[RMDB]
RNA sequence: GGGAACGACUCGAGUAGAGUCGAAAAGAAAAAUAUGACAUGCCGCCUGCCCACGGGCGUAACAUCCCGUGCUUGGUGUACGACCGACUGAAAGACACGUCGGCAGGUUAUAUCACUAUGCACAGACGACGUUAUACCGUUUCGACGGUAUAACGUCAAAAGAAACAACAACAACAAC
Reactivity to DMS in 0.01 (KOAc 150mM, MgCl2 10mM, bicine 150mM(pH8.5), 24C), signal-to-noise 2, nucleotides 027 to 126: g020a010a090a130a030a050u010a040u010g000a050c020a050u000g000c060c010g020c060c010u000g030c010c040c030a140c140g000g000g030c100g000u000a080a080c110a070u000c000c040c020g040u000g000c150u010u000g000g000u000g010u000a050c160g000a040c000c040g010a040c080u000g000a020a100a170g000a150c160a080c200g020u000c010g010g040c060a040g010g020u010u000a030u010a030u020c070a050c080u030a040u010g000c090a040c100a140g040a130c180